Chemical mapping of a 177-nucleotide RNA with 2A3 and DMS.
Conditions: 150 mM KOAc, 10 mM MgCl2 and 150 mM bicine (pH 8.5), 24 C.
DMS adducts were read by reverse transcription with MarathonRT.
Source: RMDB library OK2TST, as collected in RNAgym.
High DMS reactivity at an A or C suggests that its Watson-Crick edge is free.
RNA sequence: GGGAACGACUCGAGUAGAGUCGAAAACUUUAAUGGAUCAGCCUAAAAAUGGUCACCAAAACUAUAUAACAAAGACACAAGGUGUAGUGGCUAUAAAGACAAUGAUGACAAAACUGCAUACACUCCACAUCUUACGAGCUUUCGAGCUCGUAAGAUGAAAAGAAACAACAACAACAAC
Reactivity to 2A3 in 0.01 (KOAc 150mM, MgCl2 10mM, bicine 150mM(pH8.5), 24C), signal-to-noise 2, nucleotides 027 to 126: c030u090u140u220a060a140u110g020g020a060u070c010a010g070c020c030u050a080a060a060a060a080u100g020g000u070c030a030c020c010a040a020a090a050c050u020a020u030a010u100a300a110c090a090a080a040g070a090c060a000c020a120a040g000g000u070g000u040a060g050u010g010g000c000u010a050u070a140a060a010g050a030c030a010a150u120g030a030u090g030a020c050a050a100a100a050c040u050g060c050a020u100a050c010a000c060u050c030c010a010
Reactivity to DMS in 0.01 (KOAc 150mM, MgCl2 10mM, bicine 150mM(pH8.5), 24C), signal-to-noise 1, nucleotides 027 to 126: c050u000u030u000a040a080u020g020g000a050u000c060a150g000c070c100u000a000a050a090a070a100u000g020g020u000c000a070c020c070a010a010a050a130c080u020a070u000a060u000a120a120c160a110a160a170g000a030c050a070c080a150a070g010g000u010g000u000a100g010u000g020g000c030u000a100u000a000a080a080g010a030c110a070a090u000g000a020u000g020a050c030a090a070a070a120c130u010g050c110a060u010a070c140a030c100u000c030c080a180